The data come from the RNA Mapping Database (RMDB), library OK3TST. This 207-nucleotide RNA was probed chemically with 2A3.

RNA sequence: GGGAACGACUCGAGUAGAGUCGAAAAAGAUGAUCUAUUUUUUUAGCACUGAGCAUAGACCUGGUCCAUAGAGGUUCUCAGAAAUGGUGAUAUUAUUUUCAUUGUUGGUAUAACAAUGUCAAUAAUAAUUGCUGUACUUUGAAUUUGGGGGAUAGGCCUCCCCACUACCAUUCGUGGUAGUGGGGAGAAAAGAAACAACAACAACAAC
Reactivity to 2A3 in 0.01 (KOAc 150mM, MgCl2 10mM, bicine 150mM(pH8.5), 24C), signal-to-noise 1, nucleotides 027 to 156: a000g040a050u190g010a000u030c070u050a300u130u000u050u000u020u180u130a070g070c050a040c090u000g050a040g060c110a090u040a070g000a010c040c020u040g020g030u000c050c000a050u060a080g070a020g040g000u050u000c060u000c010a040g040a030a130a050u080g010g050u020g050a010u000a000u000u000a000u000u000u010u000c000a000u010u010g010u000u040g130g140u300a200u070a300a000c000a000a000u000g000u010c010a030a000u000a000a050u140a090a180u030u030g040c010u010g020u140a130c030u080u020u050g020a060a020u170u090u060g040g020g000g000g000a050u030a050g000g050c030